[RMDB]
RNA sequence: GGGAACGACUCGAGUAGAGUCGAAAAUUAAGUUAAUAGGUAUUGGCGGUACACCUUGUAUAAAGGUUGCUGCUAUGCAGUCUAAACUUACAGAUCUUAAAUGCACAUCUGUGGUUCUCCUCUCUGUCCACGCAAGUCUUCGGACUUGCGAAAAGAAACAACAACAACAAC
Reactivity to DMS in 0.01 (KOAc 150mM, MgCl2 10mM, bicine 150mM(pH8.5), 24C), signal-to-noise 5, nucleotides 027 to 129: u000u000a000a000g010u040u030a040a100u020a110g010g040u020a030u050u050g030g000c020g010g020u030a020c180a000c020c000u000u000g040u070a000u060a100a040a010g020g030u040u010g000c020u040g010c000u010a010u010g020c000a060g010u040c070u020a070a050a020c020u000u020a000c170a040g020a020u010c070u000u000a060a160a160u000g020c200a000c210a070u030c040u000g020u030g030g010u010u000c070u030c010c030u020c000u040c040u020g030u030c040c080a170
Reactivity to 2A3 in 0.01 (KOAc 150mM, MgCl2 10mM, bicine 150mM(pH8.5), 24C), signal-to-noise 6, nucleotides 027 to 129: u060u020a030a020g030u010u090a090a030u060a130g060g080u010a040u120u160g020g000c010g000g010u030a010c030a030c110c000u010u020g090u000a160u170a190a020a010g010g000u000u000g000c000u000g000c010u000a000u020g000c000a020g040u030c030u060a040a060a070c020u020u060a010c030a010g050a040u000c010u070u190a150a160a110u260g070c060a050c000a100u050c010u040g030u040g020g020u020u020c000u010c010c020u000c000u010c030u080g090u060c020c030a030
An RNA of 170 nucleotides, treated with DMS and 2A3 and read out base by base. For 2A3 the reverse transcriptase was SuperScript II with manganese. The data come from the RNA Mapping Database (RMDB), library 15KLIB. For DMS the reverse transcriptase was MarathonRT.